[RMDB]
RNA sequence: GGGAACGACUCGAGUAGAGUCGAAAAAAAAUGAGUGCGUGGUAGCACAAACCAGACCAAUCUUCGGCACAUGGUCGCAGAAGUACAGCUUCGCCUGUACAAAGCGAACAACAACAACAACAAGCAAGAAACACCUUACUUUCGAGUAAGGUGUUUCAAAAGAAACAACAACAACAAC
Reactivity to DMS in 0.01 (KOAc 150mM, MgCl2 10mM, bicine 150mM(pH8.5), 24C), signal-to-noise 1, nucleotides 027 to 126: a000a090a020a060u000g020a240g020u000g000c020g000u020g000g030u000a080g030c000a000c070a000a090a030c030c010a150g000a120c050c040a100a130u000c090u000u030c070g000g050c030a060c110a120u000g000g000u010c040g030c000a020g000a300a070g000u010a020c010a000g010c030u030u000c240g000c240c000u060g000u020a010c000a080a260a230g000c000g020a000a010c010a040a020c070a050a020c020a000a040c020a030a070c030a090a060g040c300a030a100
Reactivity to 2A3 in 0.01 (KOAc 150mM, MgCl2 10mM, bicine 150mM(pH8.5), 24C), signal-to-noise 1, nucleotides 027 to 126: a000a000a010a050u140g000a000g000u000g000c050g000u070g040g050u100a020g030c000a000c010a040a010a010c000c020a050g050a060c040c000a000a110u080c070u140u110c030g070g030c050a010c020a150u060g110g040u030c040g020c070a060g010a260a000g030u060a000c010a010g040c020u120u180c090g060c090c000u000g000u010a030c050a020a000a000g030c040g010a000a000c010a060a000c040a000a000c030a040a000c000a000a010c010a040a020g060c010a100a120
Chemical mapping of a 177-nucleotide RNA with DMS and 2A3. For DMS the reverse transcriptase was MarathonRT. The data come from the RNA Mapping Database (RMDB), library M2PK90. 2A3 adducts were read by reverse transcription with SuperScript II with manganese.